Source: RMDB library M2PK90, as collected in RNAgym. The record gives the reactivity of an RNA of 177 nucleotides to 2A3 and DMS. For 2A3 the reverse transcriptase was SuperScript II with manganese. The RNA was probed in 150 mM KOAc, 10 mM MgCl2 and 150 mM bicine (pH 8.5) at 24 C. In probing experiments dimethyl sulfate is read out at A N1 and C N3, which are open when not base-paired.
RNA sequence: GGGAACGACUCGAGUAGAGUCGAAAAAGAAAUAGCGAUAAUCGUAACAGAAAUGUCCUUCACAUAGCGCUACGCACAGAACUAUUAGUAGCGCAAUAGCUAUUGAAGGACAUUACCUGCCAAAAAAUCUAAAUAAGUGCUUCGGCACUUAUUUAGAAAAAGAAACAACAACAACAAC
Reactivity to 2A3 in 0.01 (KOAc 150mM, MgCl2 10mM, bicine 150mM(pH8.5), 24C), signal-to-noise 1, nucleotides 027 to 126: a000g120a020a100a020u150a020g000c090g000a030u110a080a120u130c050g040u060a020a010c000a040g060a010a030a000u010g010u000c000c030u010u020c000a080c000a040u050a000g030c020g000c030u000a000c010g000c040a070c060a140g150a300a030c130u110a120u300u210a090g000u010a000g010c000g000c020a000a020u010a000g010c000u050a030u030u030g020a000a020g030g000a000c010a000u000u000a030c000c000u000g150c050c010a210a300a100a050a000a100
Reactivity to DMS in 0.01 (KOAc 150mM, MgCl2 10mM, bicine 150mM(pH8.5), 24C), signal-to-noise 2, nucleotides 027 to 126: a040g010a090a040a080u000a100g000c020g010a160u000a090a110u010c050g030u020a130a210c020a020g000a060a040a000u000g000u010c000c000u000u000c010a010c240a040u000a020g000c000g020c100u000a010c020g020c070a100c130a120g000a100a110c230u020a100u010u010a070g020u000a040g000c000g010c020a020a020u010a100g010c060u000a020u000u000g000a010a000g000g000a010c000a000u000u000a040c140c000u000g030c070c050a000a030a050a060a090a050